[RMDB]
RNA sequence: GGGAACGACUCGAGUAGAGUCGAAAACACAUGCGAUUGCUGUUCGACGAGAAGAGCGGUUUUCUGAAGACCAUCACGCGUAAGAACCAGAAGAAGGAGUUGCUCAAGCCGCUUCAGUGCAACAUCAAUCUUUUCCAGCGUUCGCGCUGGAAAAGAUAAAAGAAACAACAACAACAAC
Reactivity to DMS in 0.01 (KOAc 150mM, MgCl2 10mM, bicine 150mM(pH8.5), 24C), signal-to-noise 1, nucleotides 027 to 126: c070a050c190a020u000g010c150g000a050u010u010g010c040u000g020u000u000c040g010a150c100g000a300g000a100a120g010a080g010c060g020g000u000u000u000u000c060u000g000a110a030g010a040c060c010a000u000c010a080c120g010c090g030u010a150a130g010a140a150c060c050a050g000a130a120g010a060a030g000g010a100g010u000u000g030c010u000c050a110a140g000c020c030g000c060u000u000c060a030g020u000g040c050a010a030c020a050u010c080a130